[RMDB]
The data come from the RNA Mapping Database (RMDB), library OK2TRN.
Structure probing data (DMS) for a 177-nucleotide construct.
The DMS profile rests on 1,165 reads.
Values cover nucleotides 27 to 126.
Reactivities are rounded to 0.1 and cut off at 0 and 3.

RNA sequence: GGGAACGACUCGAGUAGAGUCGAAAACAGGCUGUAGGGGGAGGAGACACUGGCAGGAGAUGUGCUGUCCUGCACCAGCGCCAGCCCAGCUCCCUGGGCAGAUGUGCCCUGUGUCCUGGGUCUGACAUCAGAGGUACCUCUUCGGAGGUACCUCUGAAAAAGAAACAACAACAACAAC
Reactivity to DMS in 0.01 (KOAc 150mM, MgCl2 10mM, bicine 150mM(pH8.5), 24C), signal-to-noise 1, nucleotides 027 to 126: c060a090g010g010c000u000g020u000a150g020g020g000g000g020a110g000g010a070g000a080c120a080c020u010g000g010c020a040g000g010a090g030a140u010g060u000g020c120u000g000u000c010c060u020g010c110a050c110c040a070g000c080g020c020c010a070g000c000c010c000a070g010c060u010c040c020c040u000g000g010g060c020a050g010a090u000g000u010g020c040c040c030u000g000u000g010u000c140c020u000g000g000g000u020c050u000g030a110c090a270